Chemical mapping of a 207-nucleotide RNA with 2A3 and DMS.
For DMS, 4,037 sequencing reads were counted.
[RMDB]
RNA sequence: GGGAACGACUCGAGUAGAGUCGAAAAGGGGUCAUCGACGUUGAUCUGGUGUUGUCAGAUCGACACUGAAGCCUCCACGGUGUCUUUGGAUCUUGGAUUUACACCAGGGAGUCGAUGACGGAGGCACCCAAAAACCCCUGGUUUCGACCAGGGGUAAACCUAUUAUGUGAUUCGUCACAUAAUAGGUAAAAGAAACAACAACAACAAC
Reactivity to 2A3 in 0.01 (KOAc 150mM, MgCl2 10mM, bicine 150mM(pH8.5), 24C), signal-to-noise 5, nucleotides 027 to 156: g030g020g130g030u010c000a000u010c000g000a000c020g160u220u020g010a010u010c000u000g000g000u020g010u040u050g100u080c080a060g010a040u010c050g000a000c000a000c000u040g040a080a020g000c010c000u010c000c000a010c000g020g000u010g010u030c090u190u300u300g130g000a020u020c040u090u300g150g020a060u170u140u140a010c000a000c010c000a000g000g010g000a000g000u010c000g000a000u000g000a000c000g000g000a000g000g000c000a020c000c010c000a040a090a030a050a050c000c000c020c000u000g000g040u060u080u140c240g090a040c000c000a000g000g030g000g000u000a010a000
Reactivity to DMS in 0.01 (KOAc 150mM, MgCl2 10mM, bicine 150mM(pH8.5), 24C), signal-to-noise 1, nucleotides 027 to 156: g020g010g040g020u000c000a020u010c020g020a020c030g050u010u000g000a050u010c010u010g010g000u010g020u000u000g020u000c020a130g010a060u000c030g020a040c000a040c010u000g020a040a130g020c020c010u010c020c020a300c070g000g020u000g020u010c010u000u010u030g060g020a030u000c030u000u010g050g010a110u000u000u000a050c020a040c000c030a000g000g030g000a040g030u010c010g020a020u020g000a010c000g000g030a030g080g010c010a180c020c030c010a080a070a060a080a090c010c000c020c000u000g010g030u000u000u000c280g020a100c020c000a020g010g040g010g000u000a000a030

The RNA was probed in 150 mM KOAc, 10 mM MgCl2 and 150 mM bicine (pH 8.5) at 24 C.
The 2A3 profile rests on 5,472 reads.
For DMS the reverse transcriptase was MarathonRT.
For 2A3 the reverse transcriptase was SuperScript II with manganese.